[RMDB]
The record gives the reactivity of an RNA of 177 nucleotides to DMS and 2A3.
2A3 adducts were read by reverse transcription with SuperScript II with manganese.
It was measured as part of the RMDB library OK2TST.
For DMS the reverse transcriptase was MarathonRT.
For 2A3, 1,984 sequencing reads were counted.
The DMS profile rests on 2,465 reads.
RNA sequence: GGGAACGACUCGAGUAGAGUCGAAAAGGUAACGACGAUGCGAUCCGUGCGAUUGCGCUUUUUACCCAGACCAUCGCUAACGCCGUCUUAGAGGCUGACAAUGAUGUAGGGCUUCAGGUUAUCGAGGCGUAGUCGUUCGAUUCGUCGAACGACUACGAAAAGAAACAACAACAACAAC
Reactivity to DMS in 0.01 (KOAc 150mM, MgCl2 10mM, bicine 150mM(pH8.5), 24C), signal-to-noise 3, nucleotides 027 to 126: g010g030u000a070a130c060g010a050c140g000a090u000g010c040g020a060u000c040c040g000u010g000c110g000a060u000u000g010c040g010c020u000u010u010u000u010a120c040c010c030a230g010a100c100c020a090u010c040g030c040u000a080a100c150g010c020c040g010u000c100u000u010a170g000a050g010g010c020u000g010a040c090a110a140u000g010a080u000g000u010a100g010g000g000c000u000u010c020a080g010g000u010u010a060u000c090g010a090g020g010
Reactivity to 2A3 in 0.01 (KOAc 150mM, MgCl2 10mM, bicine 150mM(pH8.5), 24C), signal-to-noise 2, nucleotides 027 to 126: g010g020u030a030a030c010g090a020c040g060a090u100g030c010g040a020u000c020c010g060u130g050c110g020a030u040u080g020c030g090c020u080u010u020u070u080a020c000c000c000a010g020a050c030c010a070u020c010g010c070u090a060a000c040g010c040c020g080u050c030u040u100a110g020a050g140g000c040u030g020a010c050a060a130u190g060a100u050g070u060a050g120g000g000c000u110u040c080a030g100g000u090u020a130u130c040g020a030g000g070